[RMDB]
RNA sequence: GGGAACGACUCGAGUAGAGUCGAAAAACGUCGUGUACGCACGACGAAUGUUUAUCUCUAGGGUUGAUCUAUUAGAAUUACUUAUCUGAGCCAAAGUAAUUCAAGUAAUUCAGGUGUAGUGAAACAAACUGUAAGGGAUAUUCGUAUCCCUUACAGUAAAAGAAACAACAACAACAAC
Reactivity to 2A3 in 0.01 (KOAc 150mM, MgCl2 10mM, bicine 150mM(pH8.5), 24C), signal-to-noise 6, nucleotides 027 to 126: a000c000g010u000c030g000u010g040u030a030c220g000c080a000c010g010a000c000g010a010a020u070g010u030u110u040a160u040c030u000c030u070a120g110g120g000u010u020g010a040u000c020u030a050u060u090a060g010a020a010u010u010a010c000u020u040a050u130c070u080g070a030g090c070c080a120a070a030g030u050a040a050u120u130c020a020a000g010u010a010a040u040u030c020a030g060g090u100g040u080a060g000u020g080a070a020a010c030a060a100
Reactivity to DMS in 0.01 (KOAc 150mM, MgCl2 10mM, bicine 150mM(pH8.5), 24C), signal-to-noise 8, nucleotides 027 to 126: a120c010g000u000c000g050u000g010u010a100c220g050c010a010c000g010a010c010g010a040a030u010g000u010u010u010a090u010c000u000c010u010a100g010g010g010u000u000g000a080u000c040u000a030u010u000a170g000a020a030u000u000a010c000u000u000a080u000c080u010g010a080g010c100c110a090a060a070g000u010a040a050u000u010c040a050a050g010u000a020a090u000u000c020a040g010g010u010g010u000a020g020u000g000a120a040a050c060a060a080